The record gives the reactivity of an RNA of 177 nucleotides to DMS. The data come from the RNA Mapping Database (RMDB), library OK2TST. The DMS profile rests on 1,884 reads. Reactivities are given for positions 27 through 126.
[RMDB]
RNA sequence: GGGAACGACUCGAGUAGAGUCGAAAAGUGGCAUGUGCCUGUAAUCCCACCUACUCAGGAGGGUGAGGCAGGAGAAUUGCUUGAACCUGGGUGGCAGAGGAGCCUGGGUGACAGAGCCAGACUCUGCGUGUCAUUGCAGGUUCGCCUGCAAUGACACAAAAGAAACAACAACAACAAC
Reactivity to DMS in 0.01 (KOAc 150mM, MgCl2 10mM, bicine 150mM(pH8.5), 24C), signal-to-noise 2, nucleotides 027 to 126: g030u030g000g010c030a080u000g000u020g000c090c000u000g020u010a070a260u010c010c000c000a120c070c030u010a160c230u000c220a040g020g000a090g000g010g010u000g000a110g020g000c010a040g000g000a060g030a160a070u000u000g010c020u010u010g010a110a050c020c000u000g010g010g010u010g020g030c030a080g010a300g010g000a100g010c020c020u000g010g010g000u000g010a120c200a070g020a220g020c030c040a050g000a060c020u000c000u000g000c090